[RMDB]
RNA sequence: GGGAACGACUCGAGUAGAGUCGAAAAGAUAUGGAAAGGAAUACAGCUGCCACGUUGAUCUCGGAAACGAGGGAGUGGCAGACCCUGUUCUCCUUUCCUAAGUCAAAGCGAUCGUUCGCGAUCGCAACCCAUCGUAAGGGUUCGCCCUUACGAUGGGAAAAGAAACAACAACAACAAC
Reactivity to 2A3 in 0.01 (KOAc 150mM, MgCl2 10mM, bicine 150mM(pH8.5), 24C), signal-to-noise 2, nucleotides 027 to 126: g020a020u100a040u150g000g010a010a000a000g040g000a050a020u090a080c000a030g000c000u000g010c000c010a020c030g210u300u000g000a000u040c000u020c000g010g060a100a070a050c020g000a000g020g000g000a010g020u000g020g070c000a000g000a010c010c000c000u020g030u010u030c120u020c020c010u000u000u000c000c000u010a120a000g010u010c060a070a110a040g020c010g000a010u000c000g040u130u160c300g000c020g180a000u000c000g000c010a020a040
Reactivity to DMS in 0.01 (KOAc 150mM, MgCl2 10mM, bicine 150mM(pH8.5), 24C), signal-to-noise 1, nucleotides 027 to 126: g020a040u010a300u000g000g000a000a000a030g000g000a010a060u000a020c030a000g000c000u000g010c000c000a010c010g010u000u030g010a060u030c000u000c000g000g000a080a010a120c010g020a020g000g000g010a020g050u000g000g020c010a000g020a000c070c300c030u010g010u000u000c100u000c000c010u000u000u000c000c020u010a020a070g010u000c040a110a070a080g000c010g020a010u000c010g000u020u000c290g060c030g000a000u000c000g020c010a010a050